[RMDB]
RNA sequence: GGGAACGACUCGAGUAGAGUCGAAAACACAGUUCUCCGAUUCCAAUUUUCCGCAAGGAAUGUCAUCGCGACCGCCCCGCCGGUGUCUGGACACCCGCAGUACGUCGCAGCUUCGAUCCCGUAUCGGCAUUCCUCAUUAGUUCGCUAAUGAGGAAUGAAAAGAAACAACAACAACAAC
Reactivity to 2A3 in 0.01 (KOAc 150mM, MgCl2 10mM, bicine 150mM(pH8.5), 24C), signal-to-noise 2, nucleotides 027 to 126: c070a000c030a020g060u070u020c050u040c030c010g050a040u100u000c040c020a100a080u090u050u080u030c010c020g030c080a070a040g040g020a060a030u040g060u050c050a080u060c050g040c020g030a050c020c040g010c000c030c000c010g020c000c000g030g000u030g020u010c080u140g120g040a020c010a040c020c000c000g000c010a010g020u050a030c040g000u010c010g010c030a010g010c010u020u070c020g040a060u030c010c020c040g030u070a050u120c010g030g000
Reactivity to DMS in 0.01 (KOAc 150mM, MgCl2 10mM, bicine 150mM(pH8.5), 24C), signal-to-noise 5, nucleotides 027 to 126: c120a110c130a110g010u000u000c020u000c000c010g000a080u000u000c030c050a100a080u000u000u000u000c020c020g010c240a090a160g000g000a030a010u000g020u010c090a080u010c100g000c040g000a040c040c080g010c070c070c030c040g020c040c110g010g000u000g010u000c080u000g010g000a080c060a040c020c010c100g000c050a050g020u000a130c160g010u000c020g020c040a080g010c070u010u000c030g010a110u000c000c030c020g000u010a080u010c090g000g000
This 177-nucleotide RNA was probed chemically with 2A3 and DMS.
The data come from the RNA Mapping Database (RMDB), library RFMREP.
Values cover nucleotides 27 to 126.
For DMS the reverse transcriptase was MarathonRT.